The record gives the reactivity of an RNA of 177 nucleotides to DMS and 2A3. The 2A3 profile rests on 1,818 reads. The reactions ran in a buffer of 150 mM KOAc, 10 mM MgCl2 and 150 mM bicine (pH 8.5), at 24 C. For DMS the reverse transcriptase was MarathonRT. For 2A3 the reverse transcriptase was SuperScript II with manganese.

[RMDB]
RNA sequence: GGGAACGACUCGAGUAGAGUCGAAAAUCUUGCACCUUCGGGUGCAAGAAAAAGUAAGCGCAUGCGAGCGCACAGCGCACGCUGAAAAACUGCGCAAAAGAAAAACUCAGCACUUCGGUGCUGAGAACAAUACUUGUUGCUUCGGCAACAAGUAUUGAAAAGAAACAACAACAACAAC
Reactivity to DMS in 0.01 (KOAc 150mM, MgCl2 10mM, bicine 150mM(pH8.5), 24C), signal-to-noise 2, nucleotides 027 to 126: u000c000u000u000g000c000a030c000c010u000u010c160g010g000g020u010g000c000a000a000g010a000a030a100a080a130g010u000a060a160g020c020g030c000a040u000g000c020g020a060g030c000g000c030a050c120a120g010c000g110c020a030c010g010c000u010g000a090a090a080a130a090c300u000g000c000g070c010a070a070a100a080g000a050a040a040a140a130c010u000c000a000g000c010a000c000u000u000c180g030g000u000g000c000u000g000a010g010a050a110
Reactivity to 2A3 in 0.01 (KOAc 150mM, MgCl2 10mM, bicine 150mM(pH8.5), 24C), signal-to-noise 1, nucleotides 027 to 126: u010c000u000u000g010c000a000c000c000u020u060c300g090g000g000u000g000c000a000a010g000a010a010a000a020a000g060u060a130a010g000c020g030c010a020u070g000c010g020a020g000c030g010c010a090c070a290g030c010g000c010a010c010g000c020u030g060a080a080a030a000a000c110u050g000c000g000c040a030a070a070a080g080a020a090a000a000a000c000u030c000a010g030c010a020c010u040u070c240g060g010u000g000c020u000g000a000g000a000a000